[RMDB]
RNA sequence: GGGAACGACUCGAGUAGAGUCGAAAAUUGCUGUGAUGUUACCUACUUUGAAAAUAAACUCUGGUUUGAUUUUGUUGAAAAUCCCAGUGUUAUUGGUGUUUAUCAUAAACUUGGAGAACGUGUACGCCCAAGAAUUGUUGUUCGCAACAAUUCUUGGAAAAGAAACAACAACAACAAC
Reactivity to 2A3 in 0.01 (KOAc 150mM, MgCl2 10mM, bicine 150mM(pH8.5), 24C), signal-to-noise 2, nucleotides 027 to 126: u060u050g000c020u050g030u010g060a060u000g000u030u020a030c000c000u000a060c000u110u080u110g090a110a100a010a000u090a020a120a000c000u000c010u050g020g010u100u110u000g030a020u040u030u010u040g140u140u140g160a010a020a000a020u010c000c000c020a010g010u000g030u060u000a030u020u060g060g020u050g030u060u110u150a120u030c040a020u080a070a120a060c020u020u060g020g020a100g030a080a000c020g020u010g000u100a030c040g040c020
Reactivity to DMS in 0.01 (KOAc 150mM, MgCl2 10mM, bicine 150mM(pH8.5), 24C), signal-to-noise 2, nucleotides 027 to 126: u000u000g000c030u000g000u000g010a090u010g020u000u000a090c030c030u010a110c130u000u000u000g010a090a090a080a060u000a070a050a040c020u000c010u000g000g010u010u020u000g000a020u000u000u000u000g010u010u010g030a030a020a020a020u000c010c000c000a010g010u000g000u000u000a080u010u000g020g020u010g020u000u000u010a070u010c070a030u000a060a040a030c080u000u000g030g020a090g000a050a060c150g000u000g020u010a060c130g020c160

The record gives the reactivity of an RNA of 177 nucleotides to 2A3 and DMS. Conditions: 150 mM KOAc, 10 mM MgCl2 and 150 mM bicine (pH 8.5), 24 C. It was measured as part of the RMDB library 15KREP.